RNA sequence: GGGAACGACUCGAGUAGAGUCGAAAAUACCUGAAGGAGAGGACGAACGUGUUCUAACAGCUGCAACACAAUUACAAGCAACAGAUUAUGUUACACCAAUCGUGUUAGGUGAUGAGACUAAGGUUCACGUUAAAACCAGGUUCGCCUGGUUUUAACGAAAAGAAACAACAACAACAAC
Reactivity to 2A3 in 0.01 (KOAc 150mM, MgCl2 10mM, bicine 150mM(pH8.5), 24C), signal-to-noise 5, nucleotides 027 to 126: u110a010c000c000u050g060a070a050g070g050a040g020a000g060g040a040c010g010a120a050c080g090u040g060u210u000c020u070a050a050c010a030g030c010u030g040c030a060a030c030a020c010a080a080u190u150a100c050a140a040g040c010a050a050c020a050g050a060u110u110a110u280g010u030u090a030c050a010c090c000a040a050u110c090g010u040g040u070u090a050g050g010u010g010a080u080g030a020g000a010c050u110a040a040g050g020u050u050c050a030
Reactivity to DMS in 0.01 (KOAc 150mM, MgCl2 10mM, bicine 150mM(pH8.5), 24C), signal-to-noise 4, nucleotides 027 to 126: u040a070c010c000u000g020a080a080g010g000a070g020a070g000g010a080c040g060a050a080c120g000u010g020u000u000c050u020a070a070c100a090g030c020u000g000c070a050a070c020a040c050a090a050u000u040a060c190a120a090g000c110a050a040c050a050g030a060u020u010a060u010g000u020u030a040c100a140c180c130a020a040u020c050g000u010g010u010u000a110g000g010u010g010a100u010g010a070g000a050c060u000a060a060g000g010u000u000c020a140
Structure probing data (2A3 and DMS) for a 177-nucleotide construct. The RNA was probed in 150 mM KOAc, 10 mM MgCl2 and 150 mM bicine (pH 8.5) at 24 C. For 2A3, 4,038 sequencing reads were counted.